[RMDB]
RNA sequence: GGGAACGACUCGAGUAGAGUCGAAAAAAGUCAAGUUUGUGGUUCGUCGUAUCGGGGCGAUCCAACCGAGCACAUGUUUAGUGCACCAGAACGACGGGCCGUGUAUCGGGUGAUCGCCGAACGCCGAACAACCCAAGAACUUCGGUUCUUGGGUUGUAAAAGAAACAACAACAACAAC
Reactivity to DMS in 0.01 (KOAc 150mM, MgCl2 10mM, bicine 150mM(pH8.5), 24C), signal-to-noise 2, nucleotides 027 to 126: a140a000g000u030c060a110a030g020u010u010u010g000u010g030g020u000u000c000g010u000c000g000u010a140u000c050g000g040g030g060c000g010a010u000c000c160a130a170c000c020g000a010g000c040a010c020a070u040g010u000u020u030a060g010u060g020c070a160c040c030a100g010a090a080c170g000a070c060g000g000g000c010c060g000u000g010u010a030u000c000g000g010g020u000g000a020u020c010g020c000c010g000a050a000c070g000c060c000g000a030
Reactivity to 2A3 in 0.01 (KOAc 150mM, MgCl2 10mM, bicine 150mM(pH8.5), 24C), signal-to-noise 3, nucleotides 027 to 126: a000a000g300u180c170a180a080g090u080u140u070g130u150g000g010u060u020c000g000u000c010g000u000a220u300c070g090g060g020g050c050g020a020u000c000c090a000a090c000c040g010a000g050c040a000c000a100u090g090u300u150u140a120g010u040g000c090a240c020c030a110g030a240a000c050g040a030c030g130g010g000c060c010g020u000g040u010a210u050c000g000g000g000u110g000a010u010c020g000c010c000g000a000a010c040g030c000c000g030a030

An RNA of 177 nucleotides, treated with DMS and 2A3 and read out base by base. The DMS profile rests on 2,594 reads. For 2A3 the reverse transcriptase was SuperScript II with manganese. DMS adducts were read by reverse transcription with MarathonRT.